[RMDB]
RNA sequence: GGGAACGACUCGAGUAGAGUCGAAAACUCAUGAUCGGCGCUUUUGUCCAUUCGUCGGCCAGUGCUGACUUGGCGGCAGCCAAAUAUGGGGCGUCGUAUGGAAGCUGAUGCGCCGGCGAGCAGUCGUGCGAUUGAAAUUCCACCCUACAGUCUGCCGCGCUGUAUAACUCUUCGGAGUUAUACAGCGAAAAGAAACAACAACAACAAC
Reactivity to 2A3 in 0.01 (KOAc 150mM, MgCl2 10mM, bicine 150mM(pH8.5), 24C), signal-to-noise 2, nucleotides 027 to 156: c000u040c010a040u140g100a280u120c010g000g030c010g030c070u160u250u300u280g070u090c060c000a030u090u100c040g000u050c020g100g030c000c030a110g050u110g100c020u010g040a160c050u050u040g090g050c010g030g000c030a030g040c020c000a030a080a000u300a140u130g040g000g030g040c030g010u040c010g020u010a030u010g050g030a010a090g050c080u070g090a080u070g020c020g000c030c000g000g000c000g010a030g030c080a010g030u110c030g060u060g080c060g080a090u060u160g110a090a020a060u170u030c010c000a070c050c000c040u060a080c030a010g010u020c010u000g030c000c030g040

Chemical mapping of a 207-nucleotide RNA with 2A3.